[RMDB]
RNA sequence: GGGAACGACUCGAGUAGAGUCGAAAACUAAUGGGUGUUCGCACCCAUUAGAAAAGGAGACCGCGGCCACGCCGAGUAGGAUCGAGGGUACAGUCUCCAAACUCAAACCUGCUUCGGCAGGUUUGAGCGUUCUAUUCAUGUUCGCAUGAAUAGAACGAAAAGAAACAACAACAACAAC
Reactivity to DMS in 0.01 (KOAc 150mM, MgCl2 10mM, bicine 150mM(pH8.5), 24C), signal-to-noise 3, nucleotides 027 to 126: c000u000a000a000u000g020g000g030u000g020u000u020c210g020c000a000c000c000c000a000u000u000a000g000a080a060a140a180g000g010a020g000a010c000c030g020c260g000g010c000c000a020c030g000c010c000g010a180g000u030a040g010g010a110u010c010g000a150g000g000g000u010a020c010a020g000u000c000u000c000c020a050a080a180c000u000c000a000a000a010c000c000u000g000c000u000u010c250g020g000c000a010g000g010u000u000u000g000a010g000
Reactivity to 2A3 in 0.01 (KOAc 150mM, MgCl2 10mM, bicine 150mM(pH8.5), 24C), signal-to-noise 3, nucleotides 027 to 126: c000u000a000a000u000g000g010g020u030g030u050u080c200g020c070a000c000c000c010a000u000u000a000g000a000a020a000a030g010g010a010g010a010c000c010g000c040g040g000c000c000a000c010g030c010c000g040a070g080u300a050g100g020a300u020c010g030a240g020g000g000u020a020c010a000g010u000c000u000c000c000a020a000a000c010u000c000a000a000a010c000c000u020g000c000u050u080c140g090g000c000a000g000g000u000u000u000g000a010g000
Overview:
An RNA of 177 nucleotides, treated with DMS and 2A3 and read out base by base. It was measured as part of the RMDB library RFMREP. For 2A3, 5,668 sequencing reads were counted.